The record gives the reactivity of an RNA of 177 nucleotides to DMS. For DMS the reverse transcriptase was MarathonRT. The reactions ran in a buffer of 150 mM KOAc, 10 mM MgCl2 and 150 mM bicine (pH 8.5), at 24 C.
[RMDB]
RNA sequence: GGGAACGACUCGAGUAGAGUCGAAAAGAUAUGGAAGUAGAAACGAACAAGCUGUCCAAAGAACUACCGUCCUGCUCGGAAACGAGCAGACGGCUUUGGACAGCUUGUUCUCGCUACUUCCUAAGUCCUUGGUUGUUUAGUUCGCUAAACAACCAAGAAAAGAAACAACAACAACAAC
Reactivity to DMS in 0.01 (KOAc 150mM, MgCl2 10mM, bicine 150mM(pH8.5), 24C), signal-to-noise 2, nucleotides 027 to 126: g000a140u000a240u000g040g010a030a000g030u010a010g010a070a120a110c300g000a020a020c000a020a010g020c020u010g010u000c000c000a000a010a040g000a090a050c110u010a300c020c000g000u000c180c090u000g020c000u000c060g010g000a130a150a200c020g010a010g030c030a040g000a000c000g010g000c010u000u000u000g000g020a010c010a000g010c000u020u000g010u000u000c000u000c300g000c000u000a000c000u000u000c000c000u000a010a100g000u000c060